[RMDB]
Structure probing data (DMS and 2A3) for a 177-nucleotide construct.
Values cover nucleotides 27 to 126.
The DMS profile rests on 4,444 reads.
For 2A3, 4,002 sequencing reads were counted.
The reactions ran in a buffer of 150 mM KOAc, 10 mM MgCl2 and 150 mM bicine (pH 8.5), at 24 C.
RNA sequence: GGGAACGACUCGAGUAGAGUCGAAAACACUUACUGAGCAAUUUUGACAUUAUUUAUUGUAAUCAUAAUUAUUACAUGGUCAACACAAUUAAGAAAUUACCAUUAACACAGCUUGUAACUGUGACUGACAUAUGUUGGCAUUCGUGCCAACAUAUGUAAAAGAAACAACAACAACAAC
Reactivity to DMS in 0.01 (KOAc 150mM, MgCl2 10mM, bicine 150mM(pH8.5), 24C), signal-to-noise 3, nucleotides 027 to 126: c190a110c060u010u020a020c150u010g010a110g010c120a100a050u020u010u020u010g000a030c020a080u030u010a060u050u030u030a080u010u010g010u020a020a020u000c040a110u050a060a110u030u010a030u000u020a040c030a020u000g010g000u000c030a040a040c300a050c120a050a050u020u020a070a000g000a050a020a030u010u000a110c030c030a130u030u010a090a120c010a000c000a010g000c030u000u040g000u000a110a220c000u000g010u020g020a100c230u030g020
Reactivity to 2A3 in 0.01 (KOAc 150mM, MgCl2 10mM, bicine 150mM(pH8.5), 24C), signal-to-noise 7, nucleotides 027 to 126: c040a020c020u120u140a060c060u070g030a010g090c070a100a140u050u090u120u110g090a050c060a060u050u180a130u120u300u100a120u120u060g010u020a050a020u050c020a050u060a200a100u120u180a050u080u030a060c040a010u060g050g020u060c060a050a030c040a030c040a140a200u170u140a130a060g050a160a070a000u070u050a070c050c010a080u070u060a140a030c020a000c000a010g030c020u070u050g020u060a020a030c000u010g020u000g090a100c090u080g000